This 177-nucleotide RNA was probed chemically with 2A3 and DMS. The RNA was probed in 150 mM KOAc, 10 mM MgCl2 and 150 mM bicine (pH 8.5) at 24 C. It was measured as part of the RMDB library M2PK90. The DMS profile rests on 3,218 reads.
RNA sequence: GGGAACGACUCGAGUAGAGUCGAAAAAAUAAGAGUUUGGAUUAACCUAUAGGGAAUUAGCGAUCAAGAAUACAACCUAAGGAGCUGGUUGACUUAAUUAUUCCAUAGGUUGGUGGAAGCUAGCGAAUUCAUAUAAUCGUUUCGACGAUUAUAUGAAAAAAGAAACAACAACAACAAC
Reactivity to 2A3 in 0.01 (KOAc 150mM, MgCl2 10mM, bicine 150mM(pH8.5), 24C), signal-to-noise 1, nucleotides 027 to 126: a010a020u230a030a060g050a070g060u060u060u050g130g010a020u030u000a010a050c010c010u050a070u130a160g030g030g050a020a080u070u030a020g030c030g040a020u090c030a020a010g060a160a020u180a200c030a020a030c020c010u060a090a050g060g010a020g090c090u070g040g080u020u010g010a030c000u010u000a050a030u040u060a000u010u090c020c000a000u000a000g030g010u000u000g000g030u030g060g000a030a000g000c000u030a020g020c020g080a030a090
Reactivity to DMS in 0.01 (KOAc 150mM, MgCl2 10mM, bicine 150mM(pH8.5), 24C), signal-to-noise 4, nucleotides 027 to 126: a080a060u010a060a080g000a050g020u000u000u000g010g010a120u000u010a040a060c030c020u000a060u000a130g020g010g000a080a050u010u000a020g010c060g010a050u010c050a060a060g000a110a110u000a120c030a030a040c040c020u010a040a080g000g020a040g010c230u000g010g000u000u000g000a130c110u000u010a020a020u000u010a070u020u000c010c010a070u000a010g010g000u000u000g010g020u000g000g000a060a090g000c030u000a050g010c140g000a090a100